[RMDB]
RNA sequence: GGGAACGACUCGAGUAGAGUCGAAAAAGGGACCCACUGCCUAUUUUGCUGCCGCUACAGUGUUUCUCUGUGAUGGUAUUACCUUCUUUGAUUGGUAUGAUAAGAUAAAAACUUUUCUUUCAACCCGCAUAAGUUGUUUUUUCGAAAACAACUUAUGAAAAGAAACAACAACAACAAC
Reactivity to DMS in 0.01 (KOAc 150mM, MgCl2 10mM, bicine 150mM(pH8.5), 24C), signal-to-noise 5, nucleotides 027 to 126: a070g000g000g010a110c050c020c030a100c070u000g010c030c040u010a100u010u000u000u010g020c080u000g010c070c030g010c050u000a070c050a040g010u010g010u000u000u000c030u010c020u000g010u000g010a060u000g010g010u010a080u010u000a060c040c020u000u000c030u000u000u010g010a110u010u000g010g010u000a030u000g000a080u010a040a050g000a080u000a040a050a060a110a110c090u000u000u000u000c020u000u000u000c060a060a130c020c010c090g020
Reactivity to 2A3 in 0.01 (KOAc 150mM, MgCl2 10mM, bicine 150mM(pH8.5), 24C), signal-to-noise 5, nucleotides 027 to 126: a000g040g000g020a020c020c030c000a020c030u030g010c000c010u080a190u100u130u110u130g020c020u040g010c000c020g000c020u030a020c010a040g030u010g020u120u110u030c040u000c010u010g040u020g040a070u040g000g060u060a080u070u110a040c020c010u040u060c030u090u110u100g120a140u040u120g020g030u080a080u080g020a040u050a080a030g020a020u150a060a170a030a030a040c040u110u080u020u010c000u000u060u030c020a060a070c020c010c020g040
Structure probing data (DMS and 2A3) for a 177-nucleotide construct. DMS adducts were read by reverse transcription with MarathonRT. For 2A3 the reverse transcriptase was SuperScript II with manganese. The reactions ran in a buffer of 150 mM KOAc, 10 mM MgCl2 and 150 mM bicine (pH 8.5), at 24 C.